RNA sequence: GGGAACGACUCGAGUAGAGUCGAAAAAAAUCACUGGGGUUGGACAAUCCGGACGCCGCCCGGGCGCGCCUGAUCAGCAUGCAAAAUGGAGCUAACGACCUCGCCAGCGCCGGUCGUCAGGUCGCAGCUACUACGCUACGUUCGCGUAGCGUAGUAGAAAAGAAACAACAACAACAAC
Reactivity to DMS in 0.01 (KOAc 150mM, MgCl2 10mM, bicine 150mM(pH8.5), 24C), signal-to-noise 1, nucleotides 027 to 126: a050a090a040u000c010a070c090u000g000g030g010g020u000u000g000g010a110c080a140a100u000c090c030g000g000a170c050g040c020c060g000c040c010c040g010g020g030c060g000c080g040c020c000u000g010a060u020c090a160g000c040a070u000g000c100a100a050a070a090u000g000g000a090g010c030u000a050a090c030g000a040c030c020u000c040g010c000c020a090g010c070g020c050c080g000g000u000c020g030u000c110a040g010g000u000c020g040c080a110g010
Source information: Source: RMDB library OK2TRN, as collected in RNAgym. The record gives the reactivity of an RNA of 177 nucleotides to DMS. DMS (dimethyl sulfate) methylates the pairing face of unpaired adenines and cytosines. Values cover nucleotides 27 to 126. For DMS, 970 sequencing reads were counted.